[RMDB]
Chemical mapping of a 177-nucleotide RNA with 2A3 and DMS. The reactions ran in a buffer of 150 mM KOAc, 10 mM MgCl2 and 150 mM bicine (pH 8.5), at 24 C. DMS adducts were read by reverse transcription with MarathonRT. For 2A3, 5,949 sequencing reads were counted.
RNA sequence: GGGAACGACUCGAGUAGAGUCGAAAACUAGCAUGGGAUCGGAUCAUACACUAGUGAUCAUGGUACGUACUAUCUAGCUAGCAUAGCUCGUACCGAUCCGAUCUAGUAUCAUGAUCAUGACGGUACGUGCGCUACUAGAAUUCGUUCUAGUAGCGCAAAAAGAAACAACAACAACAAC
Reactivity to 2A3 in 0.01 (KOAc 150mM, MgCl2 10mM, bicine 150mM(pH8.5), 24C), signal-to-noise 4, nucleotides 027 to 126: c010u010a010g030c050a130u170g080g030g010a000u000c010g000g010a010u020c010a040u060a100c100a040c140u090a050g060u010g060a010u020c020a020u060g000g000u010a020c020g050u030a090c020u020a090u140c050u030a050g130c020u030a000g040c030a080u070a030g030c030u010c060g010u020a010c010c000g000a000u000c000c010g010a010u000c000u000a010g010u000a010u080c020a010u020g010a020u000c010a030u090g070a030c040g040g030u060a020c030g060
Reactivity to DMS in 0.01 (KOAc 150mM, MgCl2 10mM, bicine 150mM(pH8.5), 24C), signal-to-noise 5, nucleotides 027 to 126: c020u010a060g000c080a130u010g010g020g000a030u000c010g000g010a020u000c040a140u000a100c160a100c100u010a140g010u000g010a020u000c020a070u000g010g000u000a020c010g030u000a090c100u000a070u010c060u000a190g010c100u010a040g020c160a080u010a060g010c070u000c020g010u000a000c000c010g000a020u000c010c090g000a020u000c000u000a050g000u000a030u000c060a040u020g000a020u010c020a060u010g010a130c190g000g000u000a040c070g010